[RMDB]
RNA sequence: GGGAACGACUCGAGUAGAGUCGAAAAGUGACCAUUGUGACAAGGAACUUAGGGUGGCCCCUAGGAGCUGAGGAUGGUCUCCAGUUGAACAUCAACAAGACACUGAAAUUCUCUGUCCUUUAACUGCAAGGAACUAAAUUUUGCCAACGAAAAUGAAGGGUAGGAUUAGUUUCGACUAAUCCUACCCAAAAGAAACAACAACAACAAC
Reactivity to 2A3 in 0.01 (KOAc 150mM, MgCl2 10mM, bicine 150mM(pH8.5), 24C), signal-to-noise 2, nucleotides 027 to 156: g080u040g070a100c020c050a140u050u040g080u100g030a030c020a060a030g000g010a050a030c010u030u050a040g040g000g060u110g020g160c030c000c000c010u020a000g000g050a040g040c040u000g020a000g020g000a030u040g000g000u000c010u000c030c030a010g000u010u020g080a270a110c070a230u220c000a010a020c000a020a010g030a010c020a010c090u150g070a080a060a100u040u010c050u000c000u040g130u090c020c000u120u040u070a160a240c050u070g030c090a040a050g060g050a020a000c010u040a030a030a170u170u180u100u100g040c050c000a070a040c090g090a060a070a080a010u300g020a050a090
An RNA of 207 nucleotides, treated with 2A3 and read out base by base. For 2A3 the reverse transcriptase was SuperScript II with manganese. Conditions: 150 mM KOAc, 10 mM MgCl2 and 150 mM bicine (pH 8.5), 24 C.